[RMDB]
RNA sequence: GGGAACGACUCGAGUAGAGUCGAAAACGUGAUUCUAUCGAAGCAGGCGAUAUCAGCUAUAAAAACGUGCUGAAAGUGCAGCCAUUCGGCAAUGUGGUGGUGUAUGCCGACAUGACCGGUAAAGAGGGACGAGAGAGUUUUUCGAAACUCUCUCGUCAAAAGAAACAACAACAACAAC
Reactivity to 2A3 in 0.01 (KOAc 150mM, MgCl2 10mM, bicine 150mM(pH8.5), 24C), signal-to-noise 1, nucleotides 027 to 126: c050g030u050g070a080u150u150c010u060a110u120c030g000a030a000g170c100a020g030g010c040g010a000u020a020u070c000a000g040c060u050a030u270a220a120a020a000a040c070g060u060g020c000u040g020a090a030a070g070u090g000c040a000g000c020c030a060u080u090c040g090g000c020a070a110u110g000u070g070g020u030g010g000u020g030u040a050u150g050c050c000g000a000c000a120u060g010a060c020c000g070g010u060a070a070a080g090a090g040g050
Reactivity to DMS in 0.01 (KOAc 150mM, MgCl2 10mM, bicine 150mM(pH8.5), 24C), signal-to-noise 2, nucleotides 027 to 126: c120g010u010g030a050u020u000c050u000a080u000c030g030a050a100g070c100a050g010g000c050g010a120u010a100u000c010a050g090c030u000a150u000a040a060a070a100a130c230g010u020g000c020u000g010a030a020a090g040u000g000c070a080g010c010c010a100u000u000c000g010g000c000a050a050u000g010u000g000g030u010g010g000u000g000u000a070u000g000c010c010g040a020c130a010u000g010a070c040c000g000g010u020a040a040a110g000a110g020g010